[RMDB]
RNA sequence: GGGAACGACUCGAGUAGAGUCGAAAACGUGGGUUGGGGCGGCUUAGCAGAUUAAGGAGUUGUUCCACCCUAGUGGUACUUACCCCACACAAAGCCUGCGUGCAGGCAGGGUACGUGCCGCGGGGCACUUUCACUGUGAGUUCGCUCACAGUGAAAGAAAAGAAACAACAACAACAAC
Reactivity to 2A3 in 0.01 (KOAc 150mM, MgCl2 10mM, bicine 150mM(pH8.5), 24C), signal-to-noise 1, nucleotides 027 to 126: c050g020u080g020g050g060u110u120g040g000g000g030c000g030g020c020u060u030a050g060c060a060g040a300u150u120a150a100g130g000a010g020u000u010g000u000u010c010c000a030c010c010c000u000a100g000u020g040g000u010a010c000u020u000a010c020c000c020c020a080c010a000c060a160a100a020g000c000c000u000g000c060g150u110g060c020a000g020g000c010a000g000g000g010u000a000c000g000u010g000c010c000g000c010g010g000g010g020c040a020
Reactivity to DMS in 0.01 (KOAc 150mM, MgCl2 10mM, bicine 150mM(pH8.5), 24C), signal-to-noise 3, nucleotides 027 to 126: c140g020u010g000g000g030u000u000g020g010g020g030c040g010g040c010u000u000a110g010c090a150g050a110u010u000a150a140g010g000a030g000u000u000g020u000u000c000c020a140c010c010c010u000a020g040u010g010g010u000a000c010u000u000a020c020c000c000c230a110c290a210c230a090a050a120g010c000c010u000g010c030g000u010g030c010a030g000g010c020a090g000g000g000u000a000c060g010u000g000c000c000g050c030g000g000g010g040c210a140
Overview:
The record gives the reactivity of an RNA of 177 nucleotides to 2A3 and DMS. The reactions ran in a buffer of 150 mM KOAc, 10 mM MgCl2 and 150 mM bicine (pH 8.5), at 24 C. Values cover nucleotides 27 to 126.